[RMDB]
RNA sequence: GGGAACGACUCGAGUAGAGUCGAAAAUGGAGCUUCAAUUGGUCCAGAUGGAGAACCAAUUCCAACUGACACCAGUGGUAAACCGCUAUUCAAGGAUGGAUCACCUCUGCCUACUGACAGCAAUGGACAACACAAUACGUUUCGACGUAUUGUGUUGAAAAGAAACAACAACAACAAC
Reactivity to 2A3 in 0.01 (KOAc 150mM, MgCl2 10mM, bicine 150mM(pH8.5), 24C), signal-to-noise 8, nucleotides 027 to 126: u080g020g010a030g020c020u060u040c060a060a130u060u050g030g010u040c030c010a020g030a110u160g040g010a050g010a080a060c030c000a030a070u100u010c010c010a070a080c080u030g020a020c010a030c080c030a010g010u020g010g030u100a080a090a100c020c010g000c050u050a060u110u110c050a080a040g060g000a050u070g030g000a030u040c020a030c030c010u030c010u030g030c000c000u070a110c040u070g040a040c050a030g010c030a030a120u090g030g020a020
Reactivity to DMS in 0.01 (KOAc 150mM, MgCl2 10mM, bicine 150mM(pH8.5), 24C), signal-to-noise 7, nucleotides 027 to 126: u010g000g010a110g010c050u000u000c050a070a080u000u000g010g010u000c090c020a070g010a110u000g020g010a050g000a050a100c120c080a050a120u010u010c010c010a070a130c110u000g010a090c170a050c070c030a020g020u010g010g020u010a040a100a100c080c040g010c050u000a050u000u000c060a070a100g010g000a080u000g010g000a090u000c050a070c040c020u000c020u000g000c040c020u000a080c070u000g010a060c100a050g020c120a060a050u000g000g000a260
Structure probing data (2A3 and DMS) for a 177-nucleotide construct. The data come from the RNA Mapping Database (RMDB), library OK2TST. For DMS the reverse transcriptase was MarathonRT. Conditions: 150 mM KOAc, 10 mM MgCl2 and 150 mM bicine (pH 8.5), 24 C. For DMS, 9,064 sequencing reads were counted.